[RMDB]
RNA sequence: GGGAACGACUCGAGUAGAGUCGAAAAAGAACUCUCUCUAGAUUCCCAGAGAGAAUCGAGAGAAAACUGGCUCUCCCUUAGCCAUCCGAGUGGACGUUGUCCUCCUUCGGAUGCCCAGGUCGGACCGAUGCACUCUCCUUCGGGAGAGUGAAAAGAAACAACAACAACAAC
Reactivity to 2A3 in 0.01 (KOAc 150mM, MgCl2 10mM, bicine 150mM(pH8.5), 24C), signal-to-noise 9, nucleotides 027 to 129: a000g080a030a030c020u000c000u000c000u000c020u060a080g000a060u000u010c000c020c100a030g050a010g000a010g000a070a020u040c030g000a010g000a000g000a030a060a010a040c050u040g020g000c000u000c000u020c050c020c000u030u080a020g020c030c010a010u000c000c010g010a030g040u040g010g020a040c260g190u170u300g020u100c010c010u030c010c040u070u060c010g000g000a000u010g000c000c010c010a030g010g020u020c010g020g010a020c000c000g020a020u150g030
Reactivity to DMS in 0.01 (KOAc 150mM, MgCl2 10mM, bicine 150mM(pH8.5), 24C), signal-to-noise 9, nucleotides 027 to 129: a010g040a110a100c120u020c000u030c030u020c020u020a070g000a070u020u030c030c010c090a180g030a110g020a080g030a010a070u030c040g000a010g040a050g030a040a030a060a070c070u040g030g020c030u010c000u000c040c000c040u030u040a090g030c080c020a040u000c000c000g030a010g020u020g040g020a020c080g040u020u050g020u050c010c010u000c090c070u040u010c000g020g010a030u040g000c090c040c020a110g000g000u010c050g050g020a120c040c040g030a080u090g000

The record gives the reactivity of an RNA of 170 nucleotides to 2A3 and DMS. For 2A3 the reverse transcriptase was SuperScript II with manganese. Conditions: 150 mM KOAc, 10 mM MgCl2 and 150 mM bicine (pH 8.5), 24 C. Source: RMDB library 15KLIB, as collected in RNAgym. For DMS, 41,783 sequencing reads were counted.